[RMDB]
RNA sequence: GGGAACGACUCGAGUAGAGUCGAAAAUUUACACAUUCCGACCAAUUGCCGAGGACGCUCCCGAAAACGAAGACCCGGUAGAAAACCGCCGUCGAUGAAAACCAUCUGACAAUAUAAAAGGCGCCGCCGUACGAGUAAUGUUCGCAUUACUCGUACGAAAAGAAACAACAACAACAAC
Reactivity to DMS in 0.01 (KOAc 150mM, MgCl2 10mM, bicine 150mM(pH8.5), 24C), signal-to-noise 1, nucleotides 027 to 126: u030u010u070a120c300a110c260a120u030u000c120c000g000a060c010c050a140a050u020u020g010c040c010g000a130g000g000a150c050g030c030u010c000c030c040g000a120a040a060a120c090g000a080a090g010a050c050c060c060g000g030u000a160g010a110a060a170a080c040c020g000c060c110g020u000c000g010a010u000g000a050a090a150a120c070c020a010u000c000u000g040a040c070a190a040u000a140u010a130a060a110a120g000g000c010g030c040c010g000c120
Reactivity to 2A3 in 0.01 (KOAc 150mM, MgCl2 10mM, bicine 150mM(pH8.5), 24C), signal-to-noise 4, nucleotides 027 to 126: u040u090u280a080c060a010c020a050u060u050c020c010g010a020c000c010a080a150u120u130g020c000c010g000a000g010g060a120c000g020c020u020c000c020c000g010a150a130a010a010c050g020a050a040g040a060c010c010c050g000g020u050a050g120a090a140a020a040c030c020g020c030c020g030u020c020g000a000u020g070a030a040a010a110c020c000a010u000c030u060g020a020c030a110a020u090a010u090a240a140a030a000g040g000c020g050c010c020g030c020